[RMDB]
RNA sequence: GGGAACGACUCGAGUAGAGUCGAAAAGAUAUGGAGAUGACCACGGAGAACUACUUCGUCUCGGAAACGAGCGAAGCUCUAUCAAUCUCCUAAGUCGAAACAUGGACGAGUUCGCUCGUCCAUGUAACAACUUGUUUGGCUUCGGCCAAACAAGUUGAAAAGAAACAACAACAACAAC
Reactivity to DMS in 0.01 (KOAc 150mM, MgCl2 10mM, bicine 150mM(pH8.5), 24C), signal-to-noise 1, nucleotides 027 to 126: g020a080u000a300u000g010g000a020g000a060u000g010a070c300c110a080c230g000g010a020g000a080a030c030u000a250c010u000u000c000g010u000c000u000c000g010g000a120a030a090c000g010a000g000c040g000a000a000g010c020u030c010u010a160u000c130a060a090u000c000u010c010c000u030a090a100g010u000c000g010a190a120a060c000a000u000g010g000a000c000g010a020g000u000u010c230g010c000u000c020g030u000c010c010a000u000g020u000a050a170
Reactivity to 2A3 in 0.01 (KOAc 150mM, MgCl2 10mM, bicine 150mM(pH8.5), 24C), signal-to-noise 1, nucleotides 027 to 126: g000a020u080a070u040g040g020a060g000a000u010g050a000c070c150a150c300g090g040a040g020a020a120c150u210a050c050u280u020c020g300u150c000u010c020g030g000a070a050a050c000g000a010g010c040g010a000a000g010c010u000c000u050a090u170c030a000a220u010c000u010c000c000u000a170a060g100u060c080g030a180a140a000c010a030u000g000g000a020c000g010a020g050u130u090c210g070c130u000c000g020u010c050c000a000u000g000u020a000a020